Overview
Chemical mapping of a 170-nucleotide RNA with DMS and 2A3. The reactions ran in a buffer of 150 mM KOAc, 10 mM MgCl2 and 150 mM bicine (pH 8.5), at 24 C. The DMS profile rests on 27,182 reads. The 2A3 profile rests on 14,909 reads.
[RMDB]
RNA sequence: GGGAACGACUCGAGUAGAGUCGAAAACCUUUUCUUACCUUGUGGCCGGCAUGGCCCCAGCCUCCUCGCUGGCGCCGGCUGGGCAACGAUCCGAGGGGACUGUCCCUCUCGAGAAUCGGCAAAUGGGAUGACUUAACGUUCGCGUUAAGUAAAAGAAACAACAACAACAAC
Reactivity to DMS in 0.01 (KOAc 150mM, MgCl2 10mM, bicine 150mM(pH8.5), 24C), signal-to-noise 4, nucleotides 027 to 129: c000c000u030u030u020u030c000u000u000a180c000c060u000u000g050u070g000g000c000c000g080g070c050a000u090g030g000c000c050c010c000a000g060c000c170u040c160c150u020c080g040c020u000g000g000c300g080c060c060g010g020c040u000g000g000g000c060a000a110c000g070a000u030c000c000g030a000g000g000g000g000a140c130u000g020u070c060c000c010u030c020u000c000g050a040g040a110a030u020c000g000g000c000a090a080a110u100g070g020g000a140u050g030
Reactivity to 2A3 in 0.01 (KOAc 150mM, MgCl2 10mM, bicine 150mM(pH8.5), 24C), signal-to-noise 6, nucleotides 027 to 129: c020c000u050u070u030u040c020u040u110a080c020c000u070u040g070u100g200g030c000c000g030g000c040a190u170g030g010c010c010c000c000a000g010c000c060u190c010c030u100c060g010c020u020g000g000c030g000c000c000g010g000c000u000g000g040g040c010a070a040c010g020a000u000c000c000g000a000g010g010g010g020a020c070u140g120u280c010c010c000u010c010u000c010g160a220g010a070a050u040c010g030g010c040a010a040a170u120g020g000g020a050u120g030